[RMDB]
RNA sequence: GGGAACGACUCGAGUAGAGUCGAAAACCCGUUUUGUUCGCAAAACGGGACUCAUCUUUGCUUGGCAGCAUAGCAGCUGUUGGCUGGACUGCUGGCUUAUCCUUGGAGGCAGUUUCGACUGCCUCAAUUACAGAAGCAAAUUCGUUUGCUUCUGUAAAAAAGAAACAACAACAACAAC
Reactivity to DMS in 0.01 (KOAc 150mM, MgCl2 10mM, bicine 150mM(pH8.5), 24C), signal-to-noise 8, nucleotides 027 to 126: c010c000c000g000u000u000u000u000g020u010u020c200g030c010a010a010a010a010c000g010g000g010a110c090u000c130a090u010c110u000u000u000g010c020u000u010g030g020c030a020g000c080a110u010a150g000c040a050g010c030u000g010u010u010g010g010c010u000g000g000a130c040u000g000c010u000g010g010c020u000u000a060u000c060c050u000u000g010g000a030g010g000c000a010g000u000u000u020c170g010a030c000u000g000c000c000u000c000a010a030
Reactivity to 2A3 in 0.01 (KOAc 150mM, MgCl2 10mM, bicine 150mM(pH8.5), 24C), signal-to-noise 5, nucleotides 027 to 126: c000c000c000g000u010u010u000u010g020u020u040c150g000c080a000a000a000a000c010g000g010g020a050c020u030c050a200u050c080u060u150u110g020c020u090u220g040g010c010a000g000c020a080u110a160g100c010a020g000c020u080g100u300u200g170g000c010u020g030g080a080c010u000g000c000u010g030g040c000u030u130a160u180c020c040u020u120g190g000a000g000g000c000a000g000u020u040u100c140g060a040c000u020g010c000c000u000c000a000a000